Source information:
This 177-nucleotide RNA was probed chemically with 2A3 and DMS. For DMS the reverse transcriptase was MarathonRT. The DMS profile rests on 12,031 reads.

RNA sequence: GGGAACGACUCGAGUAGAGUCGAAAAUCCUGCUCGGGGGUCAGCGCCACCUUCUGCCAGGGCAAGCGGGCGGCGCGCGGCGGAAGCGUGAGCCCCAGCGUGGGGUGCAGGCCUUUGGGCAGCGGCCCCUGAUUCCUAAGUUCGCUUAGGAAUCAGGAAAAGAAACAACAACAACAAC
Reactivity to 2A3 in 0.01 (KOAc 150mM, MgCl2 10mM, bicine 150mM(pH8.5), 24C), signal-to-noise 5, nucleotides 027 to 126: u010c000c000u010g000c010u010c020g030g000g010g010g010u010c000a010g010c010g040c030c020a180c020c000u050u040c040u090g020c000c030a110g040g070g030c020a060a010g040c040g020g100g060c040g040g030c020g010c020g010c020g080g020c020g060g250a030a010g020c040g060u030g020a030g020c000c000c010c010a030g130c040g080u120g010g010g000g000u080g010c020a020g020g010c000c000u010u010u030g000g020g000c000a000g000c060g050g090c010c000
Reactivity to DMS in 0.01 (KOAc 150mM, MgCl2 10mM, bicine 150mM(pH8.5), 24C), signal-to-noise 6, nucleotides 027 to 126: u010c050c000u000g000c020u010c020g020g000g010g010g020u000c020a050g030c020g010c100c010a070c020c010u000u000c020u010g020c010c030a220g020g010g000c050a090a170g010c040g010g000g020c050g010g010c030g000c020g010c110g010g010c030g020g000a050a110g000c080g010u010g010a300g000c000c000c000c020a140g010c120g010u010g000g000g010g020u000g020c010a050g010g000c010c000u000u000u000g000g000g010c010a010g010c130g010g000c040c030

Record summary:
Values cover nucleotides 27 to 126.